[RMDB]
RNA sequence: GGGAACGACUCGAGUAGAGUCGAAAAACCUUUGUGUGUUCGUAACCAUAAGAGGUGGGAGGAUAACCGUCCCAUUGGGACGGCUAAUACUCCCACUACCCACCUUAUGGAAGAAGAACACACUCUGGUAAAACCAGUAGGGUUCGCCCUACUGGAAACAUCAUGCAAGGUUCGCCUUGCAUGAUGUAAAAGAAACAACAACAACAAC
Reactivity to DMS in 0.01 (KOAc 150mM, MgCl2 10mM, bicine 150mM(pH8.5), 24C), signal-to-noise 2, nucleotides 027 to 156: a020c000c010u000u000u000g030u000g060u010g010u000u000c020g010u010a260a300c020c000a000u000a010a040g000a090g110g030u000g000g010g000a080g030g010a070u000a080a020c010c000g000u010c000c010c010a300u020u010g030g000g000a040c000g000g000c010u000a080a150u000a140c000u000c010c010c000a010c000u010a000c030c000c040a300c160c010u010u010a030u010g000g010a020a060g000a160a230g000a030a010c000a000c010a010c000u000c030u000g030g050u010a040a000a150a180c000c000a050g030u000a000g010g020g070u020u000c300g000c000c010c000u010a000c000u020g000g000a040a050
Reactivity to 2A3 in 0.01 (KOAc 150mM, MgCl2 10mM, bicine 150mM(pH8.5), 24C), signal-to-noise 2, nucleotides 027 to 156: a000c000c000u000u020u020g000u000g000u010g010u000u000c000g030u040a030a040c000c000a000u000a000a000g020a010g010g010u010g000g000g010a010g020g000a030u010a030a030c000c010g010u010c000c010c030a070u150u300g000g000g010a000c000g010g000c020u020a010a020u100a090c000u000c010c000c000a000c000u000a000c000c010c000a050c010c000u000u000a010u000g080g020a060a010g040a030a000g000a000a000c000a000c000a000c000u000c000u000g000g000u050a070a060a010a150c010c010a000g000u000a000g030g000g010u030u040c230g160c010c000c000u010a000c000u010g010g000a030a020
The data come from the RNA Mapping Database (RMDB), library RNAMAK.
The record gives the reactivity of an RNA of 207 nucleotides to DMS and 2A3.
2A3 adducts were read by reverse transcription with SuperScript II with manganese.
Reactivities are given for positions 27 through 156.
For DMS the reverse transcriptase was MarathonRT.
For DMS, 2,674 sequencing reads were counted.